[RMDB]
RNA sequence: GGGAACGACUCGAGUAGAGUCGAAAAGCACUUAUCAGAGCAGAACUUAAUAAAGAAAAGACUGCAAGAGCGCUAACUGGCUUAGUAAGUCUAUUUAUUGUUCUAUUGAAACUUACUAGGAGAAUUAUGAUACGGCUACAUUCGUGUAGCCGUAUCAAAAAGAAACAACAACAACAAC
Reactivity to DMS in 0.01 (KOAc 150mM, MgCl2 10mM, bicine 150mM(pH8.5), 24C), signal-to-noise 2, nucleotides 027 to 126: g000c020a100c050u000u020a100u050c100a060g010a270g030c000a000g000a040a030c030u030u030a070a120u040a050a040a030g000a080a020a080a030g000a300c000u010g000c020a030a090g000a010g000c050g000c050u020a080a240c140u000g000g030c000u040u000a000g000u000a050a010g000u000c030u020a070u000u030u040a020u050u030g010u010u080c270u000a050u000u000g010a050a070a010c000u010u000a000c000u000a010g000g000a050g020a080a050u060u020a070
Reactivity to 2A3 in 0.01 (KOAc 150mM, MgCl2 10mM, bicine 150mM(pH8.5), 24C), signal-to-noise 3, nucleotides 027 to 126: g000c010a030c070u110u130a110u120c080a010g050a000g170c020a040g010a210a050c030u080u190a030a040u140a210a240a030g180a060a120a000a040g030a000c000u000g000c000a000a030g070a000g060c070g010c000u030a040a070c080u060g090g000c020u010u000a000g000u050a060a000g000u000c020u000a100u020u120u010a070u040u190g090u130u090c090u080a130u050u060g070a090a000a000c020u000u000a000c000u000a010g080g060a050g020a030a110u270u060a040

An RNA of 177 nucleotides, treated with DMS and 2A3 and read out base by base.
Source: RMDB library OK1LIB, as collected in RNAgym.